[RMDB]
RNA sequence: GGGAACGACUCGAGUAGAGUCGAAAAGUGAUGCGAUGAUGAGUUUCUAGAAAUUGACCUUCCUAAGCACAGAAGGGUUUGAGAUCCACUGAUGGACGUUUUAUUAAGUUGGUUAUAGUGAAGCUCCAACAUCCUUUCCAAAAUGCCUUAAGAAAGGCCCUACAUGGUGAUUCGUCACCAUGUAGGGAAAAGAAACAACAACAACAAC
Reactivity to 2A3 in 0.01 (KOAc 150mM, MgCl2 10mM, bicine 150mM(pH8.5), 24C), signal-to-noise 3, nucleotides 027 to 156: g130u110g020a020u040g010c100g060a080u040g010a050u080g010a040g040u010u030u050c060u080a120g090a190a160a100u060u090g040a030c000c000u010u030c010c020u060a110a000g020c040a040c020a020g040a050a030g030g040g000u040u100u140g080a050g000a060u050c030c020a040c040u050g040a150u040g090g070a050c050g020u090u040u080u030a160u090u090a140a040g000u030u020g050g020u010u060a070u060a100g090u110g060a010a010g000c000u000c020c000a070a080c000a040u020c000c010u000u050u030c020c000a040a090a010a000u130g010c030c020u040u050a040a020g080a100a080a040g140g020
Reactivity to DMS in 0.01 (KOAc 150mM, MgCl2 10mM, bicine 150mM(pH8.5), 24C), signal-to-noise 1, nucleotides 027 to 156: g020u000g000a100u000g020c030g020a090u000g000a070u000g020a130g020u000u000u000c010u020a140g000a040a050a140u030u000g010a060c000c000u010u000c000c000u000a140a080g020c020a110c040a030g030a050a090g000g010g010u000u000u000g010a080g000a080u020c030c010a120c060u010g020a100u000g010g010a070c120g030u000u010u000u000a160u010u000a020a160g000u000u000g010g000u000u000a100u010a120g010u000g000a030a040g020c010u000c000c020a060a030c030a080u000c010c040u000u000u000c000c030a010a050a060a160u000g000c050c010u010u000a170a130g010a070a060a060g000g000